[RMDB]
The record gives the reactivity of an RNA of 177 nucleotides to 2A3 and DMS. It was measured as part of the RMDB library OK2TRN. The DMS profile rests on 12,419 reads.

RNA sequence: GGGAACGACUCGAGUAGAGUCGAAAAUCGACUUCCAAGAACGGGUGUACCAUCAGCUGUUCGUGCCAUACAACCACCUGAUGUCAAACGACCUCGAGGAUUACGAGGUCAGGAAGGCCUUGCCACGCGUAGAGAGAGGAUUCGUCCUCUCUCUACGAAAAGAAACAACAACAACAAC
Reactivity to 2A3 in 0.01 (KOAc 150mM, MgCl2 10mM, bicine 150mM(pH8.5), 24C), signal-to-noise 6, nucleotides 027 to 126: u120c010g030a020c020u060u000c020c010a040a050g060a070a030c060g030g040g030u050g010u070a090c010c020a060u100c030a010g060c020u030g040u140u070c070g030u070g050c020c020a120u140a170c020a050a040c040c030a030c020c000u050g020a070u050g070u120c040a040a060a080c090g010a000c010c000u000c010g040a060g170g080a070u060u080a090c010g000a000g000g000u010c010a000g000g020a040a050g010g000c010c000u050u070g050c030c010a070c070g070
Reactivity to DMS in 0.01 (KOAc 150mM, MgCl2 10mM, bicine 150mM(pH8.5), 24C), signal-to-noise 9, nucleotides 027 to 126: u010c060g010a090c050u000u000c020c020a130a130g010a090a090c100g000g000g010u000g020u000a110c140c060a060u010c070a050g000c060u010g010u010u010c120g010u000g030c060c090a080u010a050c070a050a100c110c040a050c050c010u000g010a060u010g010u010c070a060a090a150c180g000a020c010c010u000c010g020a140g020g010a180u010u010a110c020g000a020g010g010u000c010a040g010g000a070a060g020g000c020c040u000u000g010c040c030a060c250g000